[RMDB]
RNA sequence: GGGAACGACUCGAGUAGAGUCGAAAAGGGUGACACUGGCGGGGCCUGCAGCCGAGGGUGUCGAGACUGCCACGCUGUCGCCCCCAGGCCUGGAAAUCCACGCGGAUUCCCGGAGACGGCGCCUCUGAUACUAUCGUCCAUUCGUGGACGAUAGUAUAAAAGAAACAACAACAACAAC
Reactivity to DMS in 0.01 (KOAc 150mM, MgCl2 10mM, bicine 150mM(pH8.5), 24C), signal-to-noise 3, nucleotides 027 to 126: g020g010g010u000g030a010c030a030c030u000g000g010c020g020g020g010g010c040c020u000g000c010a060g000c040c040g030a160g000g010g010u000g000u000c120g010a090g000a140c010u020g010c030c030a010c230g020c110u000g010u000c030g000c020c000c000c020c020a030g010g000c020c010u000g010g000a050a050a060u020c010c010a150c240g010c150g010g010a110u020u000c000c000c020g000g010a060g010a060c060g010g000c050g020c040c020u010c070u010g020
Reactivity to 2A3 in 0.01 (KOAc 150mM, MgCl2 10mM, bicine 150mM(pH8.5), 24C), signal-to-noise 4, nucleotides 027 to 126: g020g000g000u030g010a020c020a000c050u050g020g000c010g030g010g070g060c020c010u070g030c020a060g080c030c040g030a100g030g040g030u160g080u170c060g010a050g020a060c040u030g000c010c010a050c100g030c100u030g020u030c000g010c000c000c000c000c000a030g060g000c000c010u030g010g030a060a080a030u030c000c000a070c180g110c180g020g000a020u020u010c010c000c010g020g000a060g010a020c020g040g000c020g000c030c000u070c030u050g020
The record gives the reactivity of an RNA of 177 nucleotides to DMS and 2A3. Reactivities are rounded to 0.1 and cut off at 0 and 3. The data come from the RNA Mapping Database (RMDB), library OK1LIB. High DMS reactivity at an A or C suggests that its Watson-Crick edge is free. For DMS, 4,872 sequencing reads were counted. The RNA was probed in 150 mM KOAc, 10 mM MgCl2 and 150 mM bicine (pH 8.5) at 24 C. For 2A3 the reverse transcriptase was SuperScript II with manganese.